[RMDB]
RNA sequence: GGGAACGACUCGAGUAGAGUCGAAAAGAGCCGAUGGUGAAGCUGCUGCAGGAAGGCGCGUACGAAAAAAUGCUGCUGCUCGCGCUCAUGAACGAGAAAGCACGCGGCAUCCUGCUCGCGUACGCGAGCCACCCUCCUUAUUCGUAAGGAGGGUGGCAAAAGAAACAACAACAACAAC
Reactivity to 2A3 in 0.01 (KOAc 150mM, MgCl2 10mM, bicine 150mM(pH8.5), 24C), signal-to-noise 8, nucleotides 027 to 126: g060a010g030c040c060g080a130u110g040g060u080g060a070a020g020c050u060g000c030u030g000c040a030g060g060a100a050g110g020c010g000c010g010u010a020c040g090a110a060a000a020a000a030u030g000c010u000g000c010u010g000c000u030c060g120c010g020c020u010c030a080u250g150a090a050c130g000a010g020a050a050a000g010c010a010c140g010c000g010g000c000a010u030c000c020u040g030c030u030c030g000c010g000u010a010c020g000c010g010a010
Reactivity to DMS in 0.01 (KOAc 150mM, MgCl2 10mM, bicine 150mM(pH8.5), 24C), signal-to-noise 9, nucleotides 027 to 126: g010a090g020c020c070g010a070u000g010g010u010g000a090a110g010c040u000g010c040u000g000c040a080g010g010a100a080g010g010c020g020c010g010u000a010c020g000a010a020a100a100a080a030u000g010c010u000g010c010u000g010c010u000c110g030c300g010c020u000c030a080u010g010a100a110c220g000a030g000a090a100a030g000c010a030c200g020c010g010g010c000a020u000c040c040u000g010c070u000c090g010c010g000u000a010c020g010c010g010a120

The data come from the RNA Mapping Database (RMDB), library OK2TRN. The record gives the reactivity of an RNA of 177 nucleotides to 2A3 and DMS. The RNA was probed in 150 mM KOAc, 10 mM MgCl2 and 150 mM bicine (pH 8.5) at 24 C.